[RMDB]
RNA sequence: GGGAACGACUCGAGUAGAGUCGAAAAUAUAAUUAUUCUAGUGUCUUUGCUUUGUUCAUAUCUUGAGGCACGAAGUGCGGACACAAGCACUCAACAAUCAUUGCCUUAUUAAUUUUUCACACGCCGCCCAUGACGGUCAGUUCGCUGACCGUCAUGGAAAAGAAACAACAACAACAAC
Reactivity to 2A3 in 0.01 (KOAc 150mM, MgCl2 10mM, bicine 150mM(pH8.5), 24C), signal-to-noise 2, nucleotides 027 to 126: u120a020u060a000a140u090u300a130u080u100c050u050a160g000u000g000u030c070u030u030u130g030c030u170u000u080g040u040u140c130a110u150a170u110c010u120u110g050a110g100g000c030a000c020g020a050a000g000u000g000c010g000g030a000c000a000c020a040a060g030c000a000c080u140c010a070a090c000a050a000u220c050a080u200u140g040c000c000u020u030a010u100u080a090a080u080u160u000u000u020c020a010c030a000c110g080c000c000g080c000
This 177-nucleotide RNA was probed chemically with 2A3. It was measured as part of the RMDB library OK1LIB.